[RMDB]
RNA sequence: GGGAACGACUCGAGUAGAGUCGAAAACAAACGCGUGUGGAAGCGAACACUAAGUCGUGGAACAUCUGCUUCGAGGGAUUUCUGGCGACGUGGACGCACGGCUUGCCCUCACCGCUGGCACGUGGAGACUCCCUCAUGGAUUCGUCCAUGAGGGAGUAAAAGAAACAACAACAACAAC
Reactivity to DMS in 0.01 (KOAc 150mM, MgCl2 10mM, bicine 150mM(pH8.5), 24C), signal-to-noise 3, nucleotides 027 to 126: c070a080a150a110c030g000c040g030u000g010u000g020g010a140a040g000c000g020a090a110c140a090c130u050a080a040g000u010c000g030u000g000g000a100a300c150a130u000c030u010g010c010u000u030c110g030a300g010g000g000a090u000u010u030c060u000g000g000c010g000a060c110g000u000g000g000a120c130g000c040a110c040g000g000c030u010u000g000c070c040c040u000c060a100c220c040g000c010u000g000g010c000a010c000g000u000g000g030a080g000
Reactivity to 2A3 in 0.01 (KOAc 150mM, MgCl2 10mM, bicine 150mM(pH8.5), 24C), signal-to-noise 6, nucleotides 027 to 126: c020a020a080a000c020g020c000g000u040g000u050g130g170a080a010g020c020g030a080a000c050a020c080u160a100a060g040u040c020g020u020g040g020a060a050c030a080u030c010u070g170c060u100u090c100g060a200g030g070g080a210u060u100u060c040u070g160g040c020g010a030c030g020u020g000g030a030c040g000c080a010c010g000g000c000u020u090g040c000c020c010u040c030a060c040c050g000c030u020g050g010c010a000c050g010u020g040g030a060g050
Description
Structure probing data (DMS and 2A3) for a 177-nucleotide construct. The RNA was probed in 150 mM KOAc, 10 mM MgCl2 and 150 mM bicine (pH 8.5) at 24 C. For DMS the reverse transcriptase was MarathonRT. Source: RMDB library OK1LIB, as collected in RNAgym.